[RMDB]
RNA sequence: GGGAACGACUCGAGUAGAGUCGAAAAGCUGGUCCGGGUUGGCCCCAGCGAACACUUGACGAACGGAUAGUCCCGUCUUGUGGAUUAGGACGUUCUAGGUCCGGUCUGUCCCCUAGUUCGUCCGAAAGGUAGCUAUGCGAUUCGUCGCAUAGCUACCAAAAGAAACAACAACAACAAC
Reactivity to DMS in 0.01 (KOAc 150mM, MgCl2 10mM, bicine 150mM(pH8.5), 24C), signal-to-noise 2, nucleotides 027 to 126: g040c010u000g000g000u020c040c000g070g080g030u060u010g000g050c010c040c000c020a030g000c020g000a050a100c040a050c000u000u000g000a010c000g010a110a020c110g000g050a060u070a170g000u000c170c000c000g000u010c030u000u000g030u000g000g000a130u020u020a200g000g000a010c000g020u000u020c030u000a010g000g000u080c130c100g000g020u040c200u050g000u040c020c030c000c020u000a020g000u000u000c010g000u010c010c000g000a050a050a020
Reactivity to 2A3 in 0.01 (KOAc 150mM, MgCl2 10mM, bicine 150mM(pH8.5), 24C), signal-to-noise 3, nucleotides 027 to 126: g030c010u030g020g020u080c000c030g140g030g000u050u200g100g040c000c060c000c000a000g020c040g010a040a010c020a020c020u000u010g020a010c000g050a080a030c030g050g130a110u070a100g110u200c050c030c000g020u000c000u030u050g000u010g070g000a020u080u180a090g010g010a000c000g000u000u020c000u000a010g000g030u080c140c060g030g060u090c120u120g300u300c000c000c010c000u000a010g000u010u000c000g000u020c000c000g000a000a010a000
Chemical mapping of a 177-nucleotide RNA with DMS and 2A3. In probing experiments dimethyl sulfate is read out at A N1 and C N3, which are open when not base-paired. The reactions ran in a buffer of 150 mM KOAc, 10 mM MgCl2 and 150 mM bicine (pH 8.5), at 24 C. It was measured as part of the RMDB library OK1LIB. 2A3 adducts were read by reverse transcription with SuperScript II with manganese. For DMS, 2,791 sequencing reads were counted. The 2A3 profile rests on 1,733 reads.